[RMDB]
RNA sequence: GGGAACGACUCGAGUAGAGUCGAAAAAUAAGUUAAGGACAUCGCAUCAUCAAGCUGAGGCUGUCACAGAGUUUAUAGACAGAUGUCGUACUUUCUUGGAUACGACCUAUGAUGCUCUUGGAGGGGCAAUCCGCUACUACUUCGGUAGUAGCGGAUUAAAAGAAACAACAACAACAAC
Reactivity to 2A3 in 0.01 (KOAc 150mM, MgCl2 10mM, bicine 150mM(pH8.5), 24C), signal-to-noise 1, nucleotides 027 to 126: a010u060a000a060g100u070u060a120a050g040g030a020c070a170u090c040g000c040a010u010c010a000u000c050a140a000g060c020u050g030a030g170g000c040u040g020u090c020a020c040a090g090a020g070u150u040u130a120u040a000g040a000c050a040g070a040u070g020u000c030g040u000a020c060u170u290u140c070u100u260g050g000a060u010a010c020g010a000c000c000u030a080u040g060a000u080g030c000u000c000u070u090g140g030a070g040g040g000g000c020
Reactivity to DMS in 0.01 (KOAc 150mM, MgCl2 10mM, bicine 150mM(pH8.5), 24C), signal-to-noise 2, nucleotides 027 to 126: a050u010a050a050g020u010u010a130a070g020g020a100c060a010u010c080g010c050a050u010c050a040u000c060a080a060g020c100u010g020a150g000g000c030u000g000u000c040a060c100a070g000a160g000u000u010u010a060u000a150g010a070c080a040g000a100u010g000u000c020g000u000a020c030u010u000u010c150u010u000g010g010a140u000a030c020g000a010c020c120u000a070u000g010a060u000g000c030u000c040u000u000g010g020a120g030g000g030g030c210
This 177-nucleotide RNA was probed chemically with 2A3 and DMS. The 2A3 profile rests on 820 reads. The RNA was probed in 150 mM KOAc, 10 mM MgCl2 and 150 mM bicine (pH 8.5) at 24 C. 2A3 adducts were read by reverse transcription with SuperScript II with manganese. It was measured as part of the RMDB library OK2TRN.